[RMDB]
RNA sequence: GGGAACGACUCGAGUAGAGUCGAAAACCUCCUCCGGAGAGAGAAGACCAUAGCGAUAGGGGGAGAUGCUAGGAGUAGGAGGCGACCGAAGCGAGGGGGAAAGUAAAGAAAGCAACGGGGCUAGCGAUGACGCCUUGGUUCGCCAAGGCGAAAAGAAACAACAACAACAAC
Reactivity to 2A3 in 0.01 (KOAc 150mM, MgCl2 10mM, bicine 150mM(pH8.5), 24C), signal-to-noise 3, nucleotides 027 to 129: c000c010u000c000c000u010c020c000g060g000a050g010a000g000a000g000a130a010g030a020c030c010a110u050a030g100c030g120a060u110a200g010g010g000g020g030a010g000a020u060g000c090u070a030g000g000a050g010u090a050g030g020a030g000g000c030g010a020c000c010g020a000a000g030c040g000a050g000g000g010g000g000a040a000a010g040u080a020a060a080g050a050a030a030g000c010a050a000c040g000g070g000g010c040u040a020g020c020g110a090u140g050a020
Reactivity to DMS in 0.01 (KOAc 150mM, MgCl2 10mM, bicine 150mM(pH8.5), 24C), signal-to-noise 2, nucleotides 027 to 129: c100c010u060c000c020u040c000c070g010g030a060g000a040g030a080g020a050a020g030a070c090c040a070u030a090g000c140g000a120u000a080g000g000g000g000g000a040g020a040u040g060c120u060a000g000g000a090g000u050a110g000g030a060g010g020c090g030a000c000c020g050a100a020g050c120g020a070g050g000g000g040g020a060a030a070g020u000a030a010a110g030a050a090a110g030c070a030a090c000g020g010g040g020c040u010a080g020c050g010a160u090g000a250